[RMDB]
RNA sequence: GGGAACGACUCGAGUAGAGUCGAAAAGAUAUGGAUGCAAUGAGCUUUGAUCUCGAAUCGGAAACGAUUCGAGGGGAGCUCUUGCAUCCUAAGUCAAAACCAGCGUCCUGUUCGCAGGACGCUGGAACCAAUCCGCUCUGUUCGCAGAGCGGAUUGGAAAAGAAACAACAACAACAAC
Reactivity to 2A3 in 0.01 (KOAc 150mM, MgCl2 10mM, bicine 150mM(pH8.5), 24C), signal-to-noise 1, nucleotides 027 to 126: g000a000u020a020u070g000g020a000u010g000c000a000a060u290g010a000g030c060u300u300u070g000a010u030c000u000c000g000a000a000u020c010g000g000a010a020a000c010g000a000u020u000c000g000a020g000g020g060g020a010g000c000u000c000u020u030g020c030a000u000c000c000u000a000a000g000u000c000a010a000a090a230c020c010a000g030c020g000u040c000c000u070g060u070u160c300g000c130a020g020g020a000c010g010c000u020g000g000a000a010

An RNA of 177 nucleotides, treated with 2A3 and read out base by base. The reactions ran in a buffer of 150 mM KOAc, 10 mM MgCl2 and 150 mM bicine (pH 8.5), at 24 C.